[RMDB]
RNA sequence: GGGAACGACUCGAGUAGAGUCGAAAAACAGUAAGUAUGGAUCAACUGAGCACAGGAAAGAAUGGGAUUUGGGAAGAUCACAUUGUUUGGAUUUUCUGCUGAUACUAAAGCUGGAUUUUUACUACACAUGAUAUGUUAGAUUCGUCUAACAUAUCAUAAAAGAAACAACAACAACAAC
Reactivity to DMS in 0.01 (KOAc 150mM, MgCl2 10mM, bicine 150mM(pH8.5), 24C), signal-to-noise 9, nucleotides 027 to 126: a080c070a080g010u000a060a070g010u000a060u000g010g010a060u000c050a050a070c050u000g010a080g020c100a070c090a070g010g010a050a050a060g000a050a030u000g010g000g000a060u000u000u000g010g020g000a140a040g010a020u000c020a030c040a050u000u000g010u000u000u000g010g000a110u000u000u000u000c030u000g010c080u000g000a070u000a070c140u010a050a090a090g010c030u000g000g000a050u000u000u000u010u000a080c070u000a060c160a090c230
Reactivity to 2A3 in 0.01 (KOAc 150mM, MgCl2 10mM, bicine 150mM(pH8.5), 24C), signal-to-noise 9, nucleotides 027 to 126: a000c040a020g060u120a120a010g030u030a050u120g020g020a040u040c020a030a070c030u060g020a020g030c030a020c020a070g040g070a060a040a030g050a030a030u040g010g000g030a030u050u050u050g060g020g010a040a030g010a040u040c020a010c010a080u040u100g110u140u100u110g100g020a090u050u010u040u030c010u030g040c020u010g020a040u030a160c050u090a110a050a020g010c020u020g020g020a030u050u020u010u040u060a070c050u040a030c050a010c010
The data come from the RNA Mapping Database (RMDB), library OK2TST. This 177-nucleotide RNA was probed chemically with DMS and 2A3. The DMS profile rests on 40,130 reads. The reactions ran in a buffer of 150 mM KOAc, 10 mM MgCl2 and 150 mM bicine (pH 8.5), at 24 C. Values are in units of 0.01, from 0 to 300, in steps of 10. For 2A3, 48,220 sequencing reads were counted.